Structure probing data (2A3 and DMS) for a 177-nucleotide construct.
For 2A3 the reverse transcriptase was SuperScript II with manganese.
The DMS profile rests on 1,473 reads.
Values cover nucleotides 27 to 126.
DMS adducts were read by reverse transcription with MarathonRT.
The RNA was probed in 150 mM KOAc, 10 mM MgCl2 and 150 mM bicine (pH 8.5) at 24 C.

RNA sequence: GGGAACGACUCGAGUAGAGUCGAAAAUCAAAGAGCGUACACCACACUCAGACUGUACGACAGUCUGACACACACGUACGCUAGUCCAACGAGAGAGAGAGAGCGUUGGAACAAGUGUGUGAAAAAAACUGGUGGUAUGAUUCGUCAUACCACCAGUAAAAGAAACAACAACAACAAC
Reactivity to 2A3 in 0.01 (KOAc 150mM, MgCl2 10mM, bicine 150mM(pH8.5), 24C), signal-to-noise 4, nucleotides 027 to 126: u150c060a050a050a020g110a020g020c000g010u010a010c030a050c040c030a050c020a010c070u010c000a000g000a010c000u010g000u180a140c160g190a110c210a000g000u010c000u000g030a010c000a000c000a000c000a010c020g020u030a000c020g000c000u010a010g020u000c000c000a000a000c010g010a020g000a020g000a010g000a000g000a000g010a120g030c000g000u000u010g000g040a000a050c060a070a100g010u000g010u000g000u020g050a080a030a000a000a000a010
Reactivity to DMS in 0.01 (KOAc 150mM, MgCl2 10mM, bicine 150mM(pH8.5), 24C), signal-to-noise 2, nucleotides 027 to 126: u010c080a080a090a150g000a060g010c010g010u000a020c020a170c120c020a040c130a080c290u000c000a000g000a030c000u000g020u000a220c300g000a140c000a010g020u000c000u010g000a020c040a000c030a020c040a050c050g000u000a010c000g000c000u030a030g020u000c010c000a020a010c040g030a030g000a120g010a060g000a090g010a060g010a000g020c010g010u010u000g000g000a050a090c150a080a050g010u000g000u000g010u000g000a010a000a050a150a060a020